[RMDB]
This 177-nucleotide RNA was probed chemically with DMS.
RNA sequence: GGGAACGACUCGAGUAGAGUCGAAAACUCGCAGGGUUCGCCCUGCGAGAAAGGCCGAGGUUGUUGCUCGGUUGAAAACAACAACCCUUGCAAACAAGGGAAAAACCCUUACCUUCGGGUAAGGGAACUUAAGAUCGAACUUCGGUUCGAUCUUAAGAAAAGAAACAACAACAACAAC
Reactivity to DMS in 0.01 (KOAc 150mM, MgCl2 10mM, bicine 150mM(pH8.5), 24C), signal-to-noise 2, nucleotides 027 to 126: c010u000c010g000c000a010g000g010g020u000u020c290g020c000c000c010u010g050c010g010a000g010a050a050a100g020g000c000c000g010a100g000g010u000u020g010u010u010g000c020u000c010g000g030u000u000g000a040a060a080a100c060a030a130c200a030a180c010c000c010u000u020g010c300a170a120a210c020a000a010g010g000g010a010a050a060a110a030c000c010c000u000u000a000c010c000u000u020c220g030g010g020u000a000a000g020g010g010a000a000

Source: RMDB library M2PK50, as collected in RNAgym. The reactions ran in a buffer of 150 mM KOAc, 10 mM MgCl2 and 150 mM bicine (pH 8.5), at 24 C. For DMS, 1,014 sequencing reads were counted.